[RMDB]
RNA sequence: GGGAACGACUCGAGUAGAGUCGAAAAUUGCCAAAAACAGUACGCGAAGAGAGCAGGUUAAAAUGCUGGAAAAUCAUACCAAUCUGGCGGCGAGCUUUGGUCAACUCGGAUUCUGACAGCGUGGUCAGGUACCACUAGUAUUCGUACUAGUGGUACCAAAAGAAACAACAACAACAAC
Reactivity to 2A3 in 0.01 (KOAc 150mM, MgCl2 10mM, bicine 150mM(pH8.5), 24C), signal-to-noise 3, nucleotides 027 to 126: u070u020g090c010c000a040a010a020a020a010c040a010g080u130a050c030g030c030g080a090a050g090a020g000a010g040c040a030g000g040u020u040a080a160a030a030u100g020c030u020g030g030a050a060a030a030u090c020a040u040a130c000c010a010a070u040c050u050g030g000c020g020g000c010g010a040g000c010u110u110u100g020g020u060c020a020a030c020u010c040g070g010a080u110u000c010u040g040a030c010a020g050c030g060u040g000g050u040c040a040
Reactivity to DMS in 0.01 (KOAc 150mM, MgCl2 10mM, bicine 150mM(pH8.5), 24C), signal-to-noise 5, nucleotides 027 to 126: u010u000g010c010c030a060a060a080a120a110c100a060g000u010a050c070g030c050g010a120a100g020a160g000a080g020c030a040g000g000u010u000a050a050a060a100u010g010c020u000g000g000a070a050a050a080u000c090a080u000a080c070c060a040a080u000c050u000g010g010c020g010g010c090g000a070g010c150u000u010u000g030g000u000c080a060a050c060u010c040g000g000a110u000u010c050u010g000a060c050a090g010c080g030u000g010g010u000c090a050